RNA sequence: GGGAACGACUCGAGUAGAGUCGAAAAGUUAGGCGAGGCUCGUAUACAAACACAGGUUGCUGAUCUGACGACGUCGAGAGACGCCCAAGAUUAGGACAGGAUAUAUCGAACCAAGGUAUAUCCCCAUAAAACUCGGAACACUUCGGUGUUCCGAGAACAGCAAGAAGAUGUUCGCAUCUUCUUGCUGAAAAGAAACAACAACAACAAC
Reactivity to 2A3 in 0.01 (KOAc 150mM, MgCl2 10mM, bicine 150mM(pH8.5), 24C), signal-to-noise 2, nucleotides 027 to 156: g020u040u030a020g000g030c040g010a060g020g110c030u000c070g030u070a070u020a140c100a040a110a030c060a020c040a080g120g030u100u130g110c000u000g000a060u000c020u060g030a020c030g000a020c010g020u030c000g010a020g010a020g000a050c000g020c000c030c000a030a020g060a060u060u110a030g030g020a020c050a080g000g000a020u010a000u000a000u000c020g020a070a060c120c040a140a040g000g010u000a010u000a000u020c000c000c020c000a090u190a090a180a050a050c000u000c000g000g020a000a000c010a000c020u040u090c190g060g000u000g000u000u000c000c000g000a000g000a000a000
Reactivity to DMS in 0.01 (KOAc 150mM, MgCl2 10mM, bicine 150mM(pH8.5), 24C), signal-to-noise 1, nucleotides 027 to 156: g000u010u010a010g010g040c040g010a120g020g000c010u030c030g000u010a210u000a130c080a090a110a150c080a070c060a120g000g020u000u000g010c020u000g010a030u030c020u000g000a220c000g000a010c030g050u020c000g000a300g030a300g000a030c000g010c010c030c060a300a100g010a080u020u010a090g000g000a150c070a060g000g000a060u010a010u000a010u010c000g000a090a250c130c010a150a160g030g000u000a010u000a030u000c000c000c010c000a090u030a070a080a050a170c000u010c000g000g010a080a000c010a010c010u000u000c300g090g000u000g000u000u000c000c000g000a000g000a010a030